[RMDB]
RNA sequence: GGGAACGACUCGAGUAGAGUCGAAAACCGCGUUCCAUCCUUUCUUACCUGAUGGCCGGCAUGGUCCCAGCCUCCUCGCUGGCGCCGGCUGGGCAACAUUCCGAGGGGACCGUCCCCUCGGUAAUGGGGCUAUUUUAUUCUUCGGAAUAAAAUAGCCAAAAGAAACAACAACAACAAC
Reactivity to 2A3 in 0.01 (KOAc 150mM, MgCl2 10mM, bicine 150mM(pH8.5), 24C), signal-to-noise 2, nucleotides 027 to 126: c000c000g010c010g030u020u020c060c010a120u080c080c060u090u180u070c010u110u080a110c030c010u120g080a140u150g120g010c040c020g000g000c050a110u160g070g120u150c050c010c010a000g000c020c010u140c020c020u080c090g000c010u050g040g000c030g000c050c000g000g000c000u040g000g000g030c040a050a010c000a030u010u040c000c000g000a000g000g020g020g020a030c120c000g300u280c020c040c000c000u000c000g010g010u000a000a000u020g000g040
Reactivity to DMS in 0.01 (KOAc 150mM, MgCl2 10mM, bicine 150mM(pH8.5), 24C), signal-to-noise 2, nucleotides 027 to 126: c020c000g020c060g020u010u000c000c010a050u020c040c030u010u000u000c020u000u010a210c030c020u010g000a100u010g010g010c020c020g000g020c030a160u000g030g000u000c300c000c020a040g000c010c120u010c130c090u000c190g010c010u010g010g000c160g000c000c010g010g000c030u000g020g000g010c050a100a150c010a030u000u000c010c000g020a010g020g010g000g030a300c240c230g000u010c020c000c000c000u000c010g000g000u000a010a000u000g020g010